[RMDB]
RNA sequence: GGGAACGACUCGAGUAGAGUCGAAAAAUCUUUAAGCAGAUGGCAGGUUCACCACGUACGGUGCGGAAGUUCGCGCUUCCGUGAAACGCGAAAAUCGGACGGUGGCUGCAAGUCGCAUCGCAAAACCUAUAGCUUGUUAGGUUCGCCUAACAAGCAAGUUAAGUUAGUACUUCGGUACUAACUUAACAAAAGAAACAACAACAACAAC
Reactivity to DMS in 0.01 (KOAc 150mM, MgCl2 10mM, bicine 150mM(pH8.5), 24C), signal-to-noise 2, nucleotides 027 to 156: a080u010c050u000u000u010a100a160g010c070a090g000a090u010g010g000c030a100g030g050u000u000c020a130c020c040a030c010g000u000a050c010g010g040u010g000c040g000g010a050a010g020u000u000c220g000c300g010c000u010u000c010c100g050u020g000a070a070a030c050g000c020g000a040a060a100a040u010c000g000g010a050c010g020g010u000g050g050c040u000g020c050a050a060g020u010c050g000c030a080u010c060g000c060a070a060a110a050c020c040u010a080u000a070g010c000u000u000g010u010u000a010g010g040u000u000c300g000c000c010u000a000a010c010a000a010g050c000a010a060
Reactivity to 2A3 in 0.01 (KOAc 150mM, MgCl2 10mM, bicine 150mM(pH8.5), 24C), signal-to-noise 4, nucleotides 027 to 156: a000u050c040u040u120u080a090a030g020c040a040g010a050u050g040g000c030a020g080g070u160u170c010a020c030c000a020c030g050u070a020c030g020g020u050g020c010g010g010a000a010g020u110u230c050g010c020g010c120u000u000c000c000g010u020g040a050a060a020c130g030c020g090a050a010a020a070u110c030g020g020a020c050g040g010u030g020g030c030u010g000c020a020a040g070u060c040g000c080a020u020c030g000c030a050a060a080a090c010c040u120a090u100a180g010c000u000u000g000u000u000a000g010g000u020u010c130g040c020c000u000a000a000c000a000a000g010c000a000a010